[RMDB]
RNA sequence: GGGAACGACUCGAGUAGAGUCGAAAAAAGGCAUGUGGUGACGAUGAAAAGGAGUUCUGUAGUGGAGAGCUUGUUGCGGCCCAUGCUGAGUUGAGAGCCGUGAUGGAGCGCUACCUCGAGGCCGAGGCCCUCGUGGACUGUUCGCAGUCCACGAGGGAAAAGAAACAACAACAACAAC
Reactivity to DMS in 0.01 (KOAc 150mM, MgCl2 10mM, bicine 150mM(pH8.5), 24C), signal-to-noise 1, nucleotides 027 to 126: a070a080g060g030c010a000u020g030u050g000g000u000g030a130c020g000a050u000g010a080a060a110a130g010g000a030g000u000u000c000u000g000u050a040g010u000g000g000a050g010a050g000c020u000u000g000u010u000g010c000g000g000c050c010c000a050u020g000c090u000g000a050g060u020u000g020a160g000a010g070c030c070g000u000g020a060u000g010g040a000g000c020g000c060u040a000c130c000u020c020g020a120g000g050c010c000g010a060g000g020
Reactivity to 2A3 in 0.01 (KOAc 150mM, MgCl2 10mM, bicine 150mM(pH8.5), 24C), signal-to-noise 2, nucleotides 027 to 126: a000a000g090g000c080a120u130g060u200g180g000u040g110a060c050g100a120u170g070a000a060a010a050g160g010a180g000u000u170c020u000g100u190a110g140u130g250g140a030g000a000g000c000u060u010g130u150u080g040c010g000g000c000c000c000a000u040g060c070u060g050a200g000u030u240g080a160g030a040g000c000c000g000u070g040a050u060g010g040a020g030c050g000c000u030a050c000c000u000c030g060a130g100g070c020c000g010a000g030g000
This 177-nucleotide RNA was probed chemically with DMS and 2A3.
Reactivities are given for positions 27 through 126.
As a SHAPE reagent, 2A3 marks flexible, mostly unpaired nucleotides at the ribose 2'-OH.
The reactions ran in a buffer of 150 mM KOAc, 10 mM MgCl2 and 150 mM bicine (pH 8.5), at 24 C.
Values are in units of 0.01, from 0 to 300, in steps of 10.